[RMDB]
The record gives the reactivity of an RNA of 207 nucleotides to 2A3 and DMS. It was measured as part of the RMDB library OK3TST. For 2A3, 1,493 sequencing reads were counted. Values cover nucleotides 27 to 156. The RNA was probed in 150 mM KOAc, 10 mM MgCl2 and 150 mM bicine (pH 8.5) at 24 C. The DMS profile rests on 3,028 reads.
RNA sequence: GGGAACGACUCGAGUAGAGUCGAAAAGAGCAUUAAUGACACCACAGCGAAAGUUGUUCCAAUUAGGUAAAUUAAUGCCUAAGGGUAAUGUAAAAAAUAAUGAGAUAAAUUGCUAAACGAGUAAAUCGUAGAAUAAAAUGCAUUUAAUGGGCAAUCACAGUUUGCAUAAUUUCGAUUAUGCAAACUGAAAAGAAACAACAACAACAAC
Reactivity to 2A3 in 0.01 (KOAc 150mM, MgCl2 10mM, bicine 150mM(pH8.5), 24C), signal-to-noise 3, nucleotides 027 to 156: g040a000g000c020a010u020u040a090a070u070g020a020c010a010c100c030a040c040a010g030c020g040a070a050a080g000u010u030g010u030u120c020c030a050a070u130u080a140g000g000u010a010a040a110u070u030a100a020u070g000c000c000u010a010a040g060g010g010u080a090a050u070g020u090a020a060a080a080a000a020u200a050a080u100g000a060g010a030u110a090a100a050u060u070g010c030u060a140a100a030c020g010a020g060u100a040a100a090u010c010g010u020a010g020a010a020u110a090a120a040a010u140g010c010a000u070u070u160a080a050u110g010g080g040c030a000a010u150c140a010
Reactivity to DMS in 0.01 (KOAc 150mM, MgCl2 10mM, bicine 150mM(pH8.5), 24C), signal-to-noise 2, nucleotides 027 to 156: g000a090g010c030a070u010u000a050a080u000g000a130c070a100c020c020a180c060a040g010c040g020a120a110a210g000u010u000g000u000u000c040c030a080a160u000u000a040g020g020u000a030a070a120u010u000a110a100u010g020c010c010u000a120a050g000g020g040u010a050a070u020g000u020a000a000a140a060a080a090u000a050a120u020g000a130g000a090u000a050a050a060u000u020g010c010u000a080a120a060c020g010a090g020u000a030a040a110u020c060g000u000a160g020a070a030u000a040a020a090a070u000g010c010a030u000u020u000a040a100u000g000g010g010c050a040a060u010c070a160